Overview:
Source: RMDB library VIROID, as collected in RNAgym. Structure probing data (2A3) for a 207-nucleotide construct. The 2A3 profile rests on 775 reads.

[RMDB]
RNA sequence: GGGAACGACUCGAGUAGAGUCGAAAAUUACUUGCUUCGGGGCGAGGGUGUUUAGCCCUUGGAACCGCAGUUGGUUCCUCGGAACUAAACUCGUGGUUCCUGUGGUUCACACCUGACCUCCUGAGCAGAAAAGAAAAAAGAAGGCGGCUCGGAGGAGGAGUUAGCUAUACUUCGGUAUAGCUAACUCAAAAGAAACAACAACAACAAC
Reactivity to 2A3 in 0.01 (KOAc 150mM, MgCl2 10mM, bicine 150mM(pH8.5), 24C), signal-to-noise 1, nucleotides 027 to 156: u160u050a080c010u020u090g030c000u010u050c050g020g020g000g050c010g020a010g000g010g000u010g010u050u080u160a030g000c000c000c000u030u040g000g000a000a010c000c000g000c010a010g000u000u000g010g010u000u010c000c020u000c170g070g010a010a000c020u150a270a110a040c010u140c300g000u010g000g000u010u030c000c000u010g060u170g000g000u000u020c060a010c000a010c000c040u020g000a030c010c010u030c000c000u010g010a000g000c000a000g050a000a100a010a000g020a040a070a020a010a000a000g050a080a030g050g030c060g000g010c050u100c120g030g000a010g020g020a010g020